[RMDB]
RNA sequence: GGGAACGACUCGAGUAGAGUCGAAAACAUCACGAAUUCAGUCGCAAAUUGUAGAAUUAGCUACUCUACGAUUUAGUGAGCGUUAGUAACGUUGUAAUAUAAUAUAGUCUUUGGAAGGAUUAUAUUGGAGCCGCGGACAAGUUCGCUUGUCCGCGAACCCUAAGAAUGCGUUCGCGCAUUCUUAGGGAAAAGAAACAACAACAACAAC
Reactivity to 2A3 in 0.01 (KOAc 150mM, MgCl2 10mM, bicine 150mM(pH8.5), 24C), signal-to-noise 2, nucleotides 027 to 156: c050a080u210c070a010c050g130a170a090u230u180c040a060g070u040c020g010c050a000a000a040u000u020g010u020a000g000a030a030u050u020a050g040c020u050a030c000u000c020u000a000c000g000a000u000u020u120a080g020u030g030a050g070c020g030u010u070a040g040u090a110a020c040g000u000u000g040u050a130a090u040a080u010a150a010u000a000u000a000g010u010c030u080u120u190g090g020a100a070g030g000a000u000u000a010u010a000u020u010g040g070a040g160c130c020g000c000g010g000a000c000a010a010g000u000u030c010g000c130u020u000g010u020c000c030g010c000g000a000a000
An RNA of 207 nucleotides, treated with 2A3 and read out base by base. The reactions ran in a buffer of 150 mM KOAc, 10 mM MgCl2 and 150 mM bicine (pH 8.5), at 24 C. For 2A3, 986 sequencing reads were counted. It was measured as part of the RMDB library M2RFPK.